Source: RMDB library TTRDES, as collected in RNAgym. The record gives the reactivity of an RNA of 177 nucleotides to 2A3 and DMS. The reactions ran in a buffer of 150 mM KOAc, 10 mM MgCl2 and 150 mM bicine (pH 8.5), at 24 C. For DMS the reverse transcriptase was MarathonRT.

RNA sequence: GGGAACGACUCGAGUAGAGUCGAAAAGAUAUGGAUGUGACCACGGGUGAACUACUUGCGAGUUCGGAAACGAACUCGGCAAGCACCUAUCAACAUCCUAAGUCAAAGCAUGCGGUUCGCCGCAUGCCCAUGGCCUAUCGUUCGCGAUAGGCCAUGGAAAAGAAACAACAACAACAAC
Reactivity to 2A3 in 0.01 (KOAc 150mM, MgCl2 10mM, bicine 150mM(pH8.5), 24C), signal-to-noise 2, nucleotides 027 to 126: g020a030u100a040u150g020g030a000u000g050u010g130a090c050c160a150c300g000g000g010u030g030a140a140c100u230a040c010u300u000g010c000g000a010g020u000u040c000g030g000a000a080a010c030g000a010a000c000u000c000g050g000c010a000a000g010c020a020c010c010u020a100u110c020a030a050c000a010u050c000c010u010a170a020g090u040c020a030a150a050g000c000a000u010g000c000g030g090u040u170c300g060c160c000g000c010a000u010g000c010
Reactivity to DMS in 0.01 (KOAc 150mM, MgCl2 10mM, bicine 150mM(pH8.5), 24C), signal-to-noise 3, nucleotides 027 to 126: g010a080u000a300u010g020g020a020u000g000u000g020a140c300c300a100c270g000g020g000u000g000a100a040c050u020a300c020u000u000g020c020g010a020g000u000u020c000g010g000a130a090a150c000g020a000a000c000u020c000g010g050c000a000a000g000c020a010c010c010u000a140u000c070a130a000c020a000u000c000c000u000a040a180g000u000c070a100a150a200g000c030a000u000g020c000g020g000u000u000c190g010c000c010g000c000a000u000g020c000